[RMDB]
The record gives the reactivity of an RNA of 177 nucleotides to 2A3 and DMS. The 2A3 profile rests on 1,760 reads. Conditions: 150 mM KOAc, 10 mM MgCl2 and 150 mM bicine (pH 8.5), 24 C. It was measured as part of the RMDB library RFMREP.

RNA sequence: GGGAACGACUCGAGUAGAGUCGAAAAGAUUUUCACCAAUCCGAUUCACUCUGUAAUAAAGAAUAAACAACAUACAGCCAUUGACACACCCAAAUUUAGGCACGUCAAAUCGGCUAUACAUUGAUAACUAUGACUCUAUGUUCGCAUAGAGUCAUAGAAAAGAAACAACAACAACAAC
Reactivity to 2A3 in 0.01 (KOAc 150mM, MgCl2 10mM, bicine 150mM(pH8.5), 24C), signal-to-noise 3, nucleotides 027 to 126: g020a030u030u060u090u090c060a060c020c050a010a010u010c020c010g040a010u090u050c020a020c070u110c020u090g040u110a030a130u090a190a200a030g100a030a050u190a180a140a040c060a040a000c020a050u180a050c060a020g000c020c000a020u010u000g000a000c000a000c000a040c060c050c020a040a190a130u070u190u080a040g020g000c040a000c050g030u000c000a000a010a090u150c040g000g000c010u010a010u040a020c030a000u030u140g050a020u080a190a000
Reactivity to DMS in 0.01 (KOAc 150mM, MgCl2 10mM, bicine 150mM(pH8.5), 24C), signal-to-noise 3, nucleotides 027 to 126: g020a110u020u000u000u010c080a180c150c080a070a070u010c080c060g010a070u000u000c050a050c040u000c080u010g000u000a130a090u020a060a050a100g020a100a070u000a050a050a070c040a020a090c060a140u000a040c140a020g000c010c020a050u000u000g000a030c020a200c160a080c240c010c070a060a110a130u020u010u010a120g000g010c080a130c280g010u000c010a010a020a060u020c150g030g010c000u000a110u000a040c120a150u000u000g000a070u010a070a130